Structure probing data (DMS) for a 177-nucleotide construct. Conditions: 150 mM KOAc, 10 mM MgCl2 and 150 mM bicine (pH 8.5), 24 C. DMS adducts were read by reverse transcription with MarathonRT.

[RMDB]
RNA sequence: GGGAACGACUCGAGUAGAGUCGAAAAGAUAUGGAGCCCUACUGGGAGUCCCUCGUCACCUAAGACAGCGGUUCGGAAACGAACCGUCGAGGUGACAGGGACAUCGAUCAGUAGGGCUCCUAAGUCAGGUUAGUCUAAACUUCGGUUUAGACUAACCAAAAGAAACAACAACAACAAC
Reactivity to DMS in 0.01 (KOAc 150mM, MgCl2 10mM, bicine 150mM(pH8.5), 24C), signal-to-noise 2, nucleotides 027 to 126: g000a030u010a140u010g010g000a040g050c000c000c010u000a000c000u000g020g000g020a020g010u000c000c000c010u000c300g010u010c000a010c000c020u010a250a210g000a060c300a040g000c010g010g000u030u000c000g000g000a040a050a060c000g010a000a000c000c000g000u010c010g000a010g000g040u000g000a010c030a010g000g000g010a010c000a030u010c190g000a040u010c000a010g010u000a000g030g020g020c000u000c000c000u000a000a020g000u000c000a110